An RNA of 177 nucleotides, treated with DMS and 2A3 and read out base by base. 2A3 adducts were read by reverse transcription with SuperScript II with manganese. Conditions: 150 mM KOAc, 10 mM MgCl2 and 150 mM bicine (pH 8.5), 24 C. Values are in units of 0.01, from 0 to 300, in steps of 10. 2A3 is a SHAPE reagent: it acylates the 2'-hydroxyl of flexible nucleotides of all four kinds.

RNA sequence: GGGAACGACUCGAGUAGAGUCGAAAAUCGCGUUCCUCGUCCUCGGUCGGAUGUGGGACCUCGAGGUUGAACGCGUCCUCGACGGCGUCACGAUCAGCACGGACGGCGGCCAACCUCGUGACGACGAGUGCAGCCGUAUGUUCGCAUACGGCUGCACAAAAGAAACAACAACAACAAC
Reactivity to DMS in 0.01 (KOAc 150mM, MgCl2 10mM, bicine 150mM(pH8.5), 24C), signal-to-noise 3, nucleotides 027 to 126: u000c040g010c110g000u000u000c000c050u000c040g020u000c020c030u000c190g010g020u000c130g020g010a010u010g010u000g010g020g000a020c040c030u000c030g000a010g010g020u000u010g000a070a080c010g030c040g000u000c000c010u000c080g010a130c090g010g040c170g020u010c120a120c120g000a080u010c080a110g030c120a070c180g010g010a020c020g010g020c000g020g010c070c010a070a070c080c010u000c000g020u000g010a160c160g000a070c020g000a060
Reactivity to 2A3 in 0.01 (KOAc 150mM, MgCl2 10mM, bicine 150mM(pH8.5), 24C), signal-to-noise 3, nucleotides 027 to 126: u070c030g000c020g020u000u000c010c020u000c030g020u020c000c000u100c110g240g090u090c030g010g080a060u050g020u060g050g040g000a010c000c020u010c010g000a020g020g000u030u030g020a020a000c030g000c000g020u030c000c000u010c060g120a110c040g010g060c080g140u100c100a030c160g060a280u080c060a020g050c070a020c100g000g030a020c030g080g130c040g010g000c020c030a000a010c000c000u010c000g010u010g030a050c070g010a020c020g020a030